Source: RMDB library OK3TST, as collected in RNAgym. Chemical mapping of a 207-nucleotide RNA with DMS and 2A3. Values cover nucleotides 27 to 156. The RNA was probed in 150 mM KOAc, 10 mM MgCl2 and 150 mM bicine (pH 8.5) at 24 C.
RNA sequence: GGGAACGACUCGAGUAGAGUCGAAAAUGAUACCAUGAAAUUGAGAAGAUCAAACGCUGAAGUAAUCAAUUUUUCUGCCUCGUUUUUACUACAACUAGUUUUCAUCAAUGUAGUGACGAUGUAUUGUUUAGUUACUCUUGGUCUAAUACUGAUGAUAGAGUACUGAUCAGUUCGCUGAUCAGUACUCAAAAGAAACAACAACAACAAC
Reactivity to DMS in 0.01 (KOAc 150mM, MgCl2 10mM, bicine 150mM(pH8.5), 24C), signal-to-noise 2, nucleotides 027 to 156: u010g000a240u000a240c070c050a140u000g020a060a140a070u040u000g010a090g010a090a110g010a170u000c050a090a090a160c100g020c130u020g020a120a080g010u010a040a070u000c080a080a090u010u010u000u010u020c110u010g010c050c040u000c030g020u010u000u000u000u030a060c020u020a050c040a010a160c140u000a080g000u000u000u010u000c050a040u010c000a090a220u000g030u000a040g020u010g010a030c060g000a060u000g010u000a060u000u000g000u000u000u000a110g000u000u000a080c060u000c060u000u010g000g010u000c030u000a020a100u000a130c120u000g000a060u000g000a110u010a110
Reactivity to 2A3 in 0.01 (KOAc 150mM, MgCl2 10mM, bicine 150mM(pH8.5), 24C), signal-to-noise 2, nucleotides 027 to 156: u130g020a020u040a090c050c000a040u130g060a090a030a090u100u100g040a050g020a120a110g010a040u050c040a060a100a080c130g020c160u120g080a060a030g030u040a060a030u050c050a040a020u010u060u010u060u010c030u010g030c010c000u000c000g000u000u000u060u090u090a010c010u000a000c010a070a020c010u110a130g140u190u140u110u290c080a100u060c030a050a070u090g000u000a010g000u000g000a010c000g000a010u050g000u020a120u060u090g040u020u050u040a040g020u020u010a040c000u000c000u050u020g010g000u000c010u090a100a020u060a190c020u060g120a070u040g010a010u070a130

Values are in units of 0.01, from 0 to 300, in steps of 10.